[RMDB]
RNA sequence: GGGAACGACUCGAGUAGAGUCGAAAAGAUAUGGACGUGUUGUAAGCGCAAUUAUGACAGGCGAAUACAUCGGAAACGAUGUAGGAGCCUGUCAUAAUUGAACUACGCUUACACCACGUCCUAAGUCCGUGUAAGCAUCGUUCGCGAUGCUUACACGAAAAGAAACAACAACAACAAC
Reactivity to DMS in 0.01 (KOAc 150mM, MgCl2 10mM, bicine 150mM(pH8.5), 24C), signal-to-noise 1, nucleotides 027 to 126: g000a120u000a260u020g020g040a040c000g000u040g000u000u010g000u000a000a000g050c000g010c000a010a000u000u000a040u000g000a000c010a000g010g000c010g000a300a300u000a030c000a000u000c000g040g000a120a050a260c000g010a000u000g040u000a000g000g000a300g000c000c000u010g050u020c000a000u000a000a070u020u000g000a070a010c210u040a300c010g000c000u000u000a000c010a000c040c000a010c020g020u000c000c000u000a070a080g000u030c020
Chemical mapping of a 177-nucleotide RNA with DMS. The DMS profile rests on 576 reads. The RNA was probed in 150 mM KOAc, 10 mM MgCl2 and 150 mM bicine (pH 8.5) at 24 C.